[RMDB]
RNA sequence: GGGAACGACUCGAGUAGAGUCGAAAAAGGUUUGUCCGGGUGUCAUCGGAGAGUGAUGGCCCUGCAGUACAGCGUUAGCUGGAGGAUCGCCAGGGGUUUUGGACUCUAGUUCUGCCCCUGACAGCUAUCAAGGCAAGGGGUUCGCUCCUUGUCUUGAAAAAGAAACAACAACAACAAC
Reactivity to 2A3 in 0.01 (KOAc 150mM, MgCl2 10mM, bicine 150mM(pH8.5), 24C), signal-to-noise 9, nucleotides 027 to 126: a000g200g020u120u110u080g040u030c020c010g010g010g010u240g020u020c020a020u020c040g150g110a130g030a060g180u260g070a020u020g020g000c010c000c000u020g030c050a030g040u100a040c020a020g020c040g090u130u120a020g000c010u010g020g040a060g070g060a110u080c060g030c050c010a010g000g010g010g010u020u080u200u180g040g000a010c010u080c120u220a080g010u020u010c010u010g000c000c000c000c000u000g010a010c000a000g000c000u020a020
Reactivity to DMS in 0.01 (KOAc 150mM, MgCl2 10mM, bicine 150mM(pH8.5), 24C), signal-to-noise 9, nucleotides 027 to 126: a070g010g010u010u010u010g010u010c050c020g000g000g000u040g020u010c010a020u000c020g010g010a170g010a170g020u030g010a030u000g000g010c010c010c000u000g010c100a110g010u030a060c040a040g010c050g010u030u020a040g010c010u000g000g000a130g010g000a110u010c080g010c090c010a010g000g000g000g010u000u010u040u010g010g000a010c010u020c230u030a120g010u000u000c010u010g000c000c000c000c000u000g000a030c030a050g000c040u000a120